[RMDB]
RNA sequence: GGGAACGACUCGAGUAGAGUCGAAAACGCCGAUGACAUUGGUUCGGCUGACAUCGAGGAGAUCUACACGGAGGCCCACAAGGCCAUCCGGGCCGACCCCUCCCCCAAACCGACCGACAAGUCAAAACAGUGAUACCAGUUUCGACUGGUAUCACUGAAAAGAAACAACAACAACAAC
Reactivity to DMS in 0.01 (KOAc 150mM, MgCl2 10mM, bicine 150mM(pH8.5), 24C), signal-to-noise 1, nucleotides 027 to 126: c200g050c000c000g000a070u000g010a180c130a300u090u000g000g010u000u000c000g000g000c020u000g000a050c250a030u000c000g010a160g020g000a090g010a030u000c000u020a120c100a080c010g010g020a220g000g000c020c050c000a130c300a260a300g000g000c000c010a020u010c010c000g000g030g020c040c050g070a020c030c000c070c000u000c000c000c000c000c030a040a070a060c090c060g000a000c000c000g000a090c300a090a120g020u000c050a060a110a050a150